[RMDB]
RNA sequence: GGGAACGACUCGAGUAGAGUCGAAAAGAUAUGGAGACCCUUGAAGCCGAACUACUGCCGCUUUCGGAAACGAAAGAUGGCAGCGGUGGAGGUCUCCUAAGUCAAAAGUAUCCCUUCGGGGAUACAACUUAGAACAUAACUUCGGUUAUGUUCUAAGAAAAGAAACAACAACAACAAC
Reactivity to DMS in 0.01 (KOAc 150mM, MgCl2 10mM, bicine 150mM(pH8.5), 24C), signal-to-noise 2, nucleotides 027 to 126: g010a030u000a300u010g000g010a010g030a020c000c020c300u010u000g010a250a300g010c000c010g010a080a040c130u010a300c010u010g000c000c010g020c000u010u000u000c000g000g000a060a070a110c000g000a020a000a010g020a070u000g000g010c000a000g000c020g000g000u010g000g010a050g040g000u000c010u000c000c000u010a020a060g000u000c010a090a110a120a140g010u000a000u000c000c000c000u000u020c220g050g000g020g020a010u000a000c010a070a110
Reactivity to 2A3 in 0.01 (KOAc 150mM, MgCl2 10mM, bicine 150mM(pH8.5), 24C), signal-to-noise 2, nucleotides 027 to 126: g010a020u090a060u150g000g010a010g020a030c020c060c000u090u090g090a090a010g010c010c010g090a110a070c160u300a040c000u300g000c000c000g030c010u000u000u000c010g020g000a110a050a030c020g000a000a040a030g110a180u160g000g000c040a000g010c000g000g000u060g000g040a060g020g000u000c000u000c000c000u010a100a010g020u020c040a060a050a000a160g010u000a000u000c020c000c000u000u050c300g060g000g000g010a000u010a010c000a000a000
Chemical mapping of a 177-nucleotide RNA with DMS and 2A3. It was measured as part of the RMDB library TTRDES. In probing experiments dimethyl sulfate is read out at A N1 and C N3, which are open when not base-paired. Conditions: 150 mM KOAc, 10 mM MgCl2 and 150 mM bicine (pH 8.5), 24 C.